This 177-nucleotide RNA was probed chemically with 2A3.
Values cover nucleotides 27 to 126.
Conditions: 150 mM KOAc, 10 mM MgCl2 and 150 mM bicine (pH 8.5), 24 C.
The data come from the RNA Mapping Database (RMDB), library OK1LIB.
Reactivities are rounded to 0.1 and cut off at 0 and 3.
RNA sequence: GGGAACGACUCGAGUAGAGUCGAAAAGUAGUGGAAAAGAAAGAAGUGGAAACACUUCGCGCACGUCCACUACAACGUGCGCAGUAUUGGAGUGUUUGAGGGAGAACCUCAAGCACUCCAGUACAAAGAUGCCCGGUACGUUCGCGUACCGGGCAUCAAAAGAAACAACAACAACAAC
Reactivity to 2A3 in 0.01 (KOAc 150mM, MgCl2 10mM, bicine 150mM(pH8.5), 24C), signal-to-noise 1, nucleotides 027 to 126: g000u020a000g000u050g230g030a130a010a100a000g120a020a160a020g000a000a000g000u000g000g130a020a000a000c000a000c010u000u000c000g010c010g000c000a000c010g000u000c000c020a000c020u010a000c000a000a000c000g050u060g000c030g010c040a010g000u000a010u000u000g000g010a000g000u000g010u000u000u000g000a000g010g080g000a080g050a300a290c000c000u010c040a000a060g000c000a000c000u000c000c000a000g000u000a000c000a000a050a000